Structure probing data (2A3 and DMS) for a 177-nucleotide construct.

RNA sequence: GGGAACGACUCGAGUAGAGUCGAAAAACGUGCCAGGUUAACCGACCGUUAAGGUUUCCGAUUUAUAACAACAACCAUCCAGUCUUCUGGAUGCCGAGUGGCUCCUGUCCACUCUGUUUGACGCCUCAUGCAAGCGAGCAUUCGUGCUCGCUUGCAUAAAAGAAACAACAACAACAAC
Reactivity to 2A3 in 0.01 (KOAc 150mM, MgCl2 10mM, bicine 150mM(pH8.5), 24C), signal-to-noise 1, nucleotides 027 to 126: a040c000g000u060g140c050c020a000g030g010u110u220a090a110c000c000g030a010c030c000g120u030u100a050a080g130g010u000u050u030c010c080g010a000u000u240u000a270u300a040a040c020a030a000c000a000a040c130c010a000u040c010c000a050g050u040c060u300u170c030u150g000g000a000u020g010c070c040g000a000g010u000g000g010c030u000c040c060u090g000u000c000c000a000c000u010c040u010g000u080u000u050g010a010c010g030c000c040u020c060
Reactivity to DMS in 0.01 (KOAc 150mM, MgCl2 10mM, bicine 150mM(pH8.5), 24C), signal-to-noise 1, nucleotides 027 to 126: a050c170g020u010g020c000c040a090g020g000u000u000a110a210c060c040g000a030c010c040g020u030u010a050a120g020g000u020u010u000c010c010g050a060u000u010u010a040u040a070a100c070a080a050c200a060a160c170c000a010u000c000c000a010g000u020c190u020u090c000u010g000g000a000u000g010c050c060g020a020g010u020g000g000c010u010c070c190u020g000u030c020c000a010c020u020c010u000g000u000u000u000g020a080c160g000c040c090u000c130

Description: The 2A3 profile rests on 450 reads. DMS adducts were read by reverse transcription with MarathonRT.